[RMDB]
The data come from the RNA Mapping Database (RMDB), library OK1LIB.
The record gives the reactivity of an RNA of 177 nucleotides to 2A3.
RNA sequence: GGGAACGACUCGAGUAGAGUCGAAAAUAACGUCUGAUUGUUCAGCAGAAGAAGAGGGACGUGUGACAGCUGAAUGAUGACACGUUCGUGAUCCGUGGAGAAAGGGUUUCAUCACAGAAUGUAAGCGGCUGGGCAUUAUCUUCGGAUAAUGCCCAGCAAAAGAAACAACAACAACAAC
Reactivity to 2A3 in 0.01 (KOAc 150mM, MgCl2 10mM, bicine 150mM(pH8.5), 24C), signal-to-noise 1, nucleotides 027 to 126: u120a110a000c020g120u000c100u180g030a000u040u000g030u010u040c000a000g000c140a000g090a220a000g160a040a000g000a100g060g020g000a000c100g000u000g040u070g090a040c000a020g030c050u060g030a140a040u000g000a120u040g000a000c000a000c120g010u000u020c070g000u000g020a010u000c110c060g140u110g000g040a100g040a020a090a040g000g000g100u130u190u130c000a000u000c040a070c060a000g200a150a100u060g000u140a120a000g030c000g120

For 2A3, 376 sequencing reads were counted. For 2A3 the reverse transcriptase was SuperScript II with manganese. Values cover nucleotides 27 to 126. The RNA was probed in 150 mM KOAc, 10 mM MgCl2 and 150 mM bicine (pH 8.5) at 24 C.